Description: An RNA of 207 nucleotides, treated with DMS and 2A3 and read out base by base. Source: RMDB library RNAMAK, as collected in RNAgym. For DMS, 2,928 sequencing reads were counted. For 2A3 the reverse transcriptase was SuperScript II with manganese. The 2A3 profile rests on 2,608 reads. Reactivities are given for positions 27 through 156.
RNA sequence: GGGAACGACUCGAGUAGAGUCGAAAAGUGGUCUUCGGACCACGUUUUAUCCUAAGUCACCAGAGUACAACUAUCUACUUGUCAGUCGGAAACGACUUGGAUUUAGUAGACGAAUUGUAUGAUGGUGAUAUGGACUAUGACCUUCUUCGGAAGGUAACAUCGACGAAGAUUUCGAUCUUCGUCGAUGAAAAGAAACAACAACAACAAC
Reactivity to DMS in 0.01 (KOAc 150mM, MgCl2 10mM, bicine 150mM(pH8.5), 24C), signal-to-noise 2, nucleotides 027 to 156: g050u010g000g010u000c000u000u010c300g010g020a030c000c000a000c010g000u020u020u000u000a080u010c000c010u030a060a300g020u010c040a020c030c010a020g000a300g050u000a010c000a020a020c030u000a130u000c000u000a000c020u000u000g010u010c080a030g000u020c010g020g010a160a140a270c010g020a000c020u010u000g080g000a040u000u010u000a050g040u020a020g020a020c020g020a020a050u000u000g000u010a020u000g020a300u000g010g010u000g050a000u000a130u000g010g000a070c100u000a110u030g010a060c020c000u000u000c000u010u010c300g030g000a050a020g040g000u000a030a140
Reactivity to 2A3 in 0.01 (KOAc 150mM, MgCl2 10mM, bicine 150mM(pH8.5), 24C), signal-to-noise 4, nucleotides 027 to 156: g020u000g000g000u020c020u040u100c260g100g000a000c000c000a000c000g020u000u000u060u070a070u020c000c000u040a100a030g010u000c000a000c000c000a000g000a010g010u000a010c020a010a020c070u050a040u030c000u000a000c000u010u000g010u010c000a000g000u000c000g030g060a100a100a080c020g030a000c000u010u050g070g000a010u290u210u170a010g000u000a000g000a040c040g050a180a300u000u010g010u000a000u010g030a020u000g000g000u000g000a000u000a000u000g000g010a030c020u120a130u300g070a030c000c000u000u000c020u060u050c210g220g000a000a000g010g000u000a020a010